[RMDB]
RNA sequence: GGGAACGACUCGAGUAGAGUCGAAAACGACUGCGUUUCGACGCAGUCGAACAUUAUGUGGUGAAAAAUAAAAGCCGAAAUUCCGAUACCAUAUAAUUUAAAUUACCUACGAGUUCGCUCGUAGGAAGUACCUAAGUCGGUUCGCCGACUUAGGUACAAAAGAAACAACAACAACAAC
Reactivity to 2A3 in 0.01 (KOAc 150mM, MgCl2 10mM, bicine 150mM(pH8.5), 24C), signal-to-noise 1, nucleotides 027 to 126: c000g000a000c030u000g000c010g010u000u100u080c180g000a010c000g000c030a000g000u000c000g000a000a000c000a000u020u020a010u060g000u000g000g000u010g120a080a040a080a160a090u200a040a210a030a020g070c010c000g010a020a130a250u250u000c070c010g050a090u010a280c000c010a000u000a000u000a020a090u030u130u290a240a280a200u050u300a000c000c000u000a010c000g000a010g000u000u060c070g100c060u010c000g020u000a010g000g000a000a000